[RMDB]
RNA sequence: GGGAACGACUCGAGUAGAGUCGAAAAGUCGUGCUGACCAACAACCACGUGAUCGCGGGCGCCACCGACAUCAAUGCGUUCAGCGUCGGCUCCGGCCAAACCUACGGCGUCGAUGUGGUCGGGUAUGCUCUUAGGAGCGGUUCGCCGCUCCUAAGAGAAAAGAAACAACAACAACAAC
Reactivity to 2A3 in 0.01 (KOAc 150mM, MgCl2 10mM, bicine 150mM(pH8.5), 24C), signal-to-noise 5, nucleotides 027 to 126: g060u050c030g010u030g050c030u050g000a030c020c020a010a110c020a010a030c010c030a070c080g070u060g040a090u090c060g000c030g040g020g000c050g000c020c010a090c010c020g050a040c030a090u140c100a090a150u150g020c040g070u080u120c050a040g020c000g030u020c020g020g020c010u030c010c010g050g010c030c020a080a080a140c030c030u040a060c040g030g000c030g000u030c010g020a050u070g030u040g090g000u010c000g020g000g000u100a060u160g030
Reactivity to DMS in 0.01 (KOAc 150mM, MgCl2 10mM, bicine 150mM(pH8.5), 24C), signal-to-noise 2, nucleotides 027 to 126: g030u000c050g020u000g000c000u010g000a090c020c030a250a140c150a050a090c060c080a020c070g000u000g000a030u050c060g010c040g000g030g040c090g010c010c020a110c040c030g000a070c120a040u020c210a120a190u040g000c090g030u010u000c090a070g020c020g000u000c020g020g010c020u020c090c050g000g030c090c020a020a030a030c120c060u000a060c070g040g000c000g030u000c050g000a030u010g010u010g000g000u000c010g020g040g020u000a020u010g000

Chemical mapping of a 177-nucleotide RNA with 2A3 and DMS.
In probing experiments dimethyl sulfate is read out at A N1 and C N3, which are open when not base-paired.
The DMS profile rests on 2,510 reads.
2A3 adducts were read by reverse transcription with SuperScript II with manganese.
It was measured as part of the RMDB library OK1LIB.